[RMDB]
RNA sequence: GGGAACGACUCGAGUAGAGUCGAAAAGAUUCGUCAGCCGCAUGCCCAGGUGGCCGCGAUCUUCACGGCUACGGCGCGGAUAGGUCCGCGCUGAUCGUUUUCCUCCAACGACGCUAUGGCGUCUUUCAAAAUCGGCAUCGGUUCGCCGAUGCCGAAAGAAUUAGGCUCAGUUCGCUGAGCCUAAUUCAAAAGAAACAACAACAACAAC
Reactivity to 2A3 in 0.01 (KOAc 150mM, MgCl2 10mM, bicine 150mM(pH8.5), 24C), signal-to-noise 1, nucleotides 027 to 156: g000a010u240u170c040g060u160c050a010g000c020c000g020c060a060u190g030c030c060c000a040g120g000u000g010g000c000c000g010c000g000a030u000c000u060u040c060a030c010g010g010c030u190a060c040g000g010c010g000c020g020g020a040u160a110g160g200u030c000c000g000c000g010c000u000g020a030u010c000g000u000u000u000u140c010c010u080c050c030a070a060c120g000a020c010g000c040u160a110u250g200g000c010g010u020c070u010u020u050c050a070a080a000a010u020c010g000g020c000a000u000c010g000g040u060u080c130g020c070c000g000a000u000g000c030c010g000a000a000a000